[RMDB]
RNA sequence: GGGAACGACUCGAGUAGAGUCGAAAAUCUAGGGUUCCGCAUGUCAAUUGACAUGGACUGGUCCGAGAGAAAACACAUACGCGUAAAUAGAAGCGCGUAUGCACACGGAGGGACAAAAGCCCGGGAGAAUGGGAUUAUUAGUUCGCUAAUAAUCCAAGGUAAUAUGCGUGUUCGCACGCAUAUUACCAAAAGAAACAACAACAACAAC
Reactivity to 2A3 in 0.01 (KOAc 150mM, MgCl2 10mM, bicine 150mM(pH8.5), 24C), signal-to-noise 2, nucleotides 027 to 156: u000c000u000a010g000g000g000u010u000c000c010g000c000a010u000g000u020c030a150a300u230u300g000a010c000a000u010g030g000a080c010u100g040g000u000c000c000g000a000g000a000g000a010a040a000a010c050a000c000a020u010a000c000g000c000g070u130a010a260a180u230a250g170a300a070g000c010g000c000g010u000a000u000g000c020a030c000a000c020g000g010a030g020g000g000a010c040a030a000a000a000g000c000c000c000g000g060g000a000g030a000a100u210g090g000g000a000u000u000a000u000u010a000g000u010u080c170g000c120u000a000a000u000a010a000u000c010c000a000a040